Structure probing data (DMS and 2A3) for a 207-nucleotide construct. 2A3 adducts were read by reverse transcription with SuperScript II with manganese. The RNA was probed in 150 mM KOAc, 10 mM MgCl2 and 150 mM bicine (pH 8.5) at 24 C. DMS (dimethyl sulfate) methylates the pairing face of unpaired adenines and cytosines.
RNA sequence: GGGAACGACUCGAGUAGAGUCGAAAACGCCGUUUCGACGGCGAUCAUCGGGGUCAAUCGGGAGCAUAGGCUUUUGACGAGCUGAAGCCUCCACGGCUCGAUAAGCCUAGCGACGAUCGAUUGACGGAGGCACCCUUAAGUAGUCCUUCGGGACUAACUUUACAACCAUAUUCGUAUGGUUGUAAAGAAAAGAAACAACAACAACAAC
Reactivity to DMS in 0.01 (KOAc 150mM, MgCl2 10mM, bicine 150mM(pH8.5), 24C), signal-to-noise 2, nucleotides 027 to 156: c030g050c010c010g020u000u020u010c190g030a120c000g030g010c010g010a020u000c050a130u000c080g020g040g010g010u000c010a050a040u010c020g000g000g000a260g020c020a170u000a060g030g000c000u010u010u010u020g010a210c090g020a040g020c020u020g000a060a110g020c020c000u000c050c030a300c040g020g000c000u000c020g000a130u000a020a040g000c000c000u000a100g010c050g020a060c050g010a120u000c020g010a010u000u000g010a040c020g030g020a040g050g020c020a160c020c010c030u000u000a050a050g010u000a030g020u000c010c010u010u000c300g040g010g000a040c010u000a010a020
Reactivity to 2A3 in 0.01 (KOAc 150mM, MgCl2 10mM, bicine 150mM(pH8.5), 24C), signal-to-noise 7, nucleotides 027 to 156: c010g000c010c000g020u040u080u130c270g140a050c000g010g030c030g030a070u080c030a060u080c060g120g010g060g010u000c000a000a000u000c010g010g020g010a020g010c030a140u120a150g020g000c020u060u050u140u240g160a110c040g000a000g000c000u010g010a080a010g020c000c000u000c000c000a010c000g000g000c000u000c000g010a050u030a170a000g000c000c010u050a060g030c030g190a280c000g000a020u010c010g010a000u000u000g000a010c000g000g000a000g000g000c010a050c010c010c000u090u070a130a050g070u050a100g000u040c020c000u040u150c280g070g000g000a000c000u000a020a010